[RMDB]
RNA sequence: GGGAACGACUCGAGUAGAGUCGAAAAAAAGAGGGUAUUAAAGUUUGCUAUGUCCUACACAUGGCACUUUCCAUAGUCAAUAUUCCUUGUGUGAAGCCAUGGAGCAAUACUCAGUUUCAUUCAACCAAUAACCCAAGGUUUUCGAACCUUGGGUUAUAAAAGAAACAACAACAACAAC
Reactivity to DMS in 0.01 (KOAc 150mM, MgCl2 10mM, bicine 150mM(pH8.5), 24C), signal-to-noise 2, nucleotides 027 to 126: a050a070a130g010a080g020g020g000u000a020u000u000a090a050a040g020u000u000u030g010c000u000a020u000g000u000c150c140u010a140c230a080c010a010u000g010g020c020a030c040u000u000u020c040c050a000u010a050g000u000c060a050a070u000a110u000u000c020c020u010u000g020u000g020u000g010a060a080g000c030c050a020u010g000g000a050g020c290a030a030u000a060c030u010c040a130g000u020u010u000c020a070u000u000c090a090a110c110c130a120
Reactivity to 2A3 in 0.01 (KOAc 150mM, MgCl2 10mM, bicine 150mM(pH8.5), 24C), signal-to-noise 1, nucleotides 027 to 126: a000a000a000g160a030g000g020g010u040a050u010u100a060a030a090g040u050u240u110g000c040u040a000u060g000u070c050c020u130a030c050a000c000a090u000g030g000c000a010c020u020u020u000c020c020a020u010a050g120u070c030a080a100u030a100u190u110c020c000u020u130g080u020g010u030g120a010a030g000c030c030a080u070g100g000a020g040c030a030a040u030a010c010u010c010a030g020u000u040u020c030a060u120u060c010a020a010c030c000a040